Source: RMDB library OK1LIB, as collected in RNAgym. The record gives the reactivity of an RNA of 177 nucleotides to 2A3 and DMS. For DMS the reverse transcriptase was MarathonRT. For 2A3, 26,989 sequencing reads were counted.
RNA sequence: GGGAACGACUCGAGUAGAGUCGAAAAGAAUAAACAAAGUCCUAUAAACCUCAAUAAUCGCUCGUUAGGAGCGACACGCGAGGACUUUGGCGUGUCCAUCCAACGAACUAAGCUCGAAAGACGAGCACACUGGUAUAAUCUUCGGAUUAUACCAGUGAAAAGAAACAACAACAACAAC
Reactivity to 2A3 in 0.01 (KOAc 150mM, MgCl2 10mM, bicine 150mM(pH8.5), 24C), signal-to-noise 9, nucleotides 027 to 126: g030a020a050u170a060a030a000c010a010a010a000g000u010c010c020u130a120u220a260a160a090c020c020u090c070a060a090u160a170a090u150c120g000c010u010c010g060u040u060a070g000g030a000g010c020g000a000c000a000c000g020c010g020a180g020g010a010c010u010u000u000g010g000c000g000u000g000u000c010c000a020u000c010c010a050a090c030g040a040a040c070u180a200a040g040c020u010c010g040a090a050a030g060a010c000g000a000g010c010a010
Reactivity to DMS in 0.01 (KOAc 150mM, MgCl2 10mM, bicine 150mM(pH8.5), 24C), signal-to-noise 6, nucleotides 027 to 126: g000a070a090u010a020a020a070c020a020a010a010g020u010c000c010u010a300u010a040a060a110c080c030u000c090a060a090u020a060a080u030c070g010c000u000c000g020u010u000a100g020g010a020g000c270g000a000c030a010c030g020c000g000a120g020g010a010c000u000u010u000g000g020c000g030u000g000u000c010c080a250u000c020c010a120a130c090g010a080a060c100u020a100a110g000c070u000c000g000a200a110a070g000a060c010g000a010g020c010a140